Structure probing data (DMS and 2A3) for a 207-nucleotide construct. The data come from the RNA Mapping Database (RMDB), library OK3TST. Values cover nucleotides 27 to 156. For DMS, 3,463 sequencing reads were counted. For DMS the reverse transcriptase was MarathonRT. The reactions ran in a buffer of 150 mM KOAc, 10 mM MgCl2 and 150 mM bicine (pH 8.5), at 24 C.
[RMDB]
RNA sequence: GGGAACGACUCGAGUAGAGUCGAAAAGGUUGCCAACACUGCUGCCAGGUGAGGGGCUCCCACGGGUACUGUGGUGCCGAGUCCAGGCGGCCCACACUAUCAGAGGCCGUGCCUGGAUCCAGCAAGGUGGGGUGUGGGCCAGCUGUGUACCUGUCAGGUUAAUGUAAUGAUUCGUCAUUACAUUAACAAAAGAAACAACAACAACAAC
Reactivity to DMS in 0.01 (KOAc 150mM, MgCl2 10mM, bicine 150mM(pH8.5), 24C), signal-to-noise 1, nucleotides 027 to 156: g020g020u000u000g020c020c010a110a140c090a090c020u000g020c030u000g040c050c040a100g000g020u090g010a080g010g040g020g000c040u010c030c020c000a060c000g020g000g000u010a040c040u000g020u000g020g030u010g050c000c020g010a110g040u010c020c010a100g000g060c000g020g020c020c010c040a100c090a150c060u000a160u000c100a210g010a250g010g050c040c030g030u000g000c030c000u020g000g000a020u000c040c080a070g030c060a060a090g020g040u020g000g060g010g010u000g020u000g020g000g000c020c020a110g060c010u010g010u000g030u000a100c020c020u020g010u010c080a050g000
Reactivity to 2A3 in 0.01 (KOAc 150mM, MgCl2 10mM, bicine 150mM(pH8.5), 24C), signal-to-noise 3, nucleotides 027 to 156: g050g030u050u050g050c030c020a020a020c020a040c080u280g040c010u010g000c020c000a070g010g060u050g070a130g000g070g030g000c010u060c000c030c000a010c020g080g040g090u250a190c140u140g010u080g090g010u050g080c030c020g030a010g030u000c010c010a010g010g000c000g010g000c000c000c000a090c000a020c020u200a160u300c050a060g030a190g200g000c010c030g040u120g080c010c000u010g020g000a010u030c020c020a010g010c020a060a050g040g010u050g010g030g000g000u010g010u010g020g020g000c030c000a040g000c000u060g020u020g030u100a040c000c000u010g060u080c050a020g020